Annotation: The data come from the RNA Mapping Database (RMDB), library VIROID. This 207-nucleotide RNA was probed chemically with 2A3. For 2A3, 691 sequencing reads were counted.

RNA sequence: GGGAACGACUCGAGUAGAGUCGAAAAAUCUCGACAAGAGGCGGCGGUCCUCAGUACUCUUACUCUUUUCUGUAAAGAGGAGACUGCUGGACUCGCCGCCCGAGUUCGAGACUGAGCCAUCUCCGAGAGAAGAUUCCGCAGGGGACGGGAUCAGCUCCAGAGCUUGAUGGUUCGCCAUCAAGCUCUGAAAAGAAACAACAACAACAAC
Reactivity to 2A3 in 0.01 (KOAc 150mM, MgCl2 10mM, bicine 150mM(pH8.5), 24C), signal-to-noise 1, nucleotides 027 to 156: a010u000c000u000c000g010a010c020a050a070g070a300g010g000c010g010g000c000g010g000u000c010c000u020c020a020g010u210a300c020u020c010u130u160a270c020u050c000u060u180u090u040c150u300g300u300a010a050a020g000a010g000g010a000g000a000c010u020g050c050u000g030g000a020c040u020c060g000c000c000g000c000c000c000g030a030g000u090u010c000g000a010g000a010c020u070g030a010g000c030c030a060u070c060u050c050c080g080a070g020a010g010a240a000g030a010u000u000c000c000g090c130a160g000g000g000g020a020c010g010g000g010a020u020c010a020g040c000u030c030
The RNA was probed in 150 mM KOAc, 10 mM MgCl2 and 150 mM bicine (pH 8.5) at 24 C. Values cover nucleotides 27 to 156.